About this RNA: This 177-nucleotide RNA was probed chemically with DMS and 2A3. DMS adducts were read by reverse transcription with MarathonRT. Reactivities are given for positions 27 through 126.

[RMDB]
RNA sequence: GGGAACGACUCGAGUAGAGUCGAAAAGAUAUAUACCGAACCGGCCUGAGAAGGAGUUAGAUCGAUGAUAUACAGGCCUGUGGUAUAAUAUCGAAUCGUUACUCUGUACUCCUUCACGUGUUGGUAGGCUUGUCGAACAUUUCGAUGUUUGACGAGCAAAAGAAACAACAACAACAAC
Reactivity to DMS in 0.01 (KOAc 150mM, MgCl2 10mM, bicine 150mM(pH8.5), 24C), signal-to-noise 9, nucleotides 027 to 126: g000a030u010a030u000a030u010a030c010c010g020a120a050c060c080g000g000c010c000u000g000a100g000a100a040g000g000a040g010u000u020a080g010a070u020c050g010a070u020g020a090u010a070u010a120c010a030g010g010c020c010u010g020u010g010g010u000a000u010a040a050u010a010u000c010g010a080a080u010c050g010u010u030a050c060u000c030u010g010u010a070c010u000c010c010u000u010c050a150c180g020u000g020u000u000g000g000u020a070g010
Reactivity to 2A3 in 0.01 (KOAc 150mM, MgCl2 10mM, bicine 150mM(pH8.5), 24C), signal-to-noise 9, nucleotides 027 to 126: g010a000u030a000u010a000u010a050c020c030g040a060a030c030c030g020g030c010c010u130g040a100g020a090a040g050g040a020g030u080u100a070g030a120u120c060g020a030u070g090a020u060a010u020a140c010a000g040g020c000c020u060g040u080g020g020u010a010u010a040a090u020a000u010c010g010a020a060u030c010g050u070u090a090c030u030c020u060g080u080a030c000u010c010c000u030u050c060a090c130g060u070g000u010u020g040g040u050a060g120
Overview: The reactions ran in a buffer of 150 mM KOAc, 10 mM MgCl2 and 150 mM bicine (pH 8.5), at 24 C. It was measured as part of the RMDB library OK1LIB.